[RMDB]
The data come from the RNA Mapping Database (RMDB), library OK2TST.
Structure probing data (2A3 and DMS) for a 177-nucleotide construct.
The 2A3 profile rests on 1,428 reads.
The reactions ran in a buffer of 150 mM KOAc, 10 mM MgCl2 and 150 mM bicine (pH 8.5), at 24 C.
RNA sequence: GGGAACGACUCGAGUAGAGUCGAAAACAAAGACCAUUAGCGUAUAAUCAUAGUCUUCAUGGAUGUUCUCACCAUAUUCAAUAGAUGACACAUUUUUAACGUCUCUCGUACCAUUAGAUACUGGGAAUGUGAUUCCUACAUUCGUGUAGGAAUCACAAAAAGAAACAACAACAACAAC
Reactivity to 2A3 in 0.01 (KOAc 150mM, MgCl2 10mM, bicine 150mM(pH8.5), 24C), signal-to-noise 2, nucleotides 027 to 126: c040a000a080a030g010a010c040c010a040u040u060a020g000c010g040u100a020u040a250a020u080c040a040u100a070g020u050c000u080u020c040a040u050g010g040a060u060g060u040u060c090u020c040a010c050c010a050u070a090u100u070c040a010a100u030a050g070a070u040g030a010c010a010c030a070u000u060u010u050u240a090a010c040g040u000c010u010c020u000c040g010u020a030c020c010a040u060u140a040g030a120u080a090c070u150g020g000g070a020a070
Reactivity to DMS in 0.01 (KOAc 150mM, MgCl2 10mM, bicine 150mM(pH8.5), 24C), signal-to-noise 2, nucleotides 027 to 126: c150a100a060a070g010a150c060c050a100u010u000a080g040c060g050u000a080u030a100a080u000c060a050u010a070g000u010c020u000u000c110a050u000g000g030a050u000g010u000u000c030u010c050a110c060c060a060u000a060u000u000c070a070a090u020a060g010a060u000g020a040c050a040c140a030u020u000u010u000u010a080a140c110g000u000c050u000c020u010c060g020u000a070c030c010a110u020u000a080g000a060u000a050c080u000g000g000g000a070a130